Structure probing data (2A3 and DMS) for a 177-nucleotide construct.

[RMDB]
RNA sequence: GGGAACGACUCGAGUAGAGUCGAAAAGACGCCUGUGUGGCGAAGCGAGCAAUGGAAUAAGCCGCAAUAGAUGAUGAGAAGGAAGCGGCAAGAUGGAACGCUCGCGAUGAGAUCCAUCUACCAGAGAAUCGCACUACCUAUUCGUAGGUAGUGCGAUAAAAGAAACAACAACAACAAC
Reactivity to 2A3 in 0.01 (KOAc 150mM, MgCl2 10mM, bicine 150mM(pH8.5), 24C), signal-to-noise 2, nucleotides 027 to 126: g050a000c030g040c000c070u260g040u030g090u220g080g000c000g000a050a010g010c000g020a000g000c030a130a160u200g020g130a130a080u130a130a060g000c000c010g010c000a010a000u040a130g160a090u200g000a030u040g100a040g090a160a160g290g000a220a000g020c000g000g000c000a020a010g030a030u030g000g070a080a000c070g000c030u040c000g000c060g000a010u100g000a020g040a040u130c000c000a000u030c000u000a120c020c000a000g010a010g000a160
Reactivity to DMS in 0.01 (KOAc 150mM, MgCl2 10mM, bicine 150mM(pH8.5), 24C), signal-to-noise 2, nucleotides 027 to 126: g040a110c070g040c000c000u020g000u100g000u060g000g020c000g020a080a160g010c000g010a020g020c050a160a230u050g030g000a100a030u000a030a060g020c000c020g050c020a100a130u010a130g000a030u000g000a160u020g020a180g000a090a100g020g000a100a300g000c020g000g000c030a010a040g000a000u000g000g000a030a070c230g000c010u000c000g010c080g010a050u000g020a100g000a000u030c020c010a030u000c010u000a100c010c050a140g000a150g000a090
Record summary: DMS adducts were read by reverse transcription with MarathonRT. It was measured as part of the RMDB library OK1LIB. For 2A3 the reverse transcriptase was SuperScript II with manganese.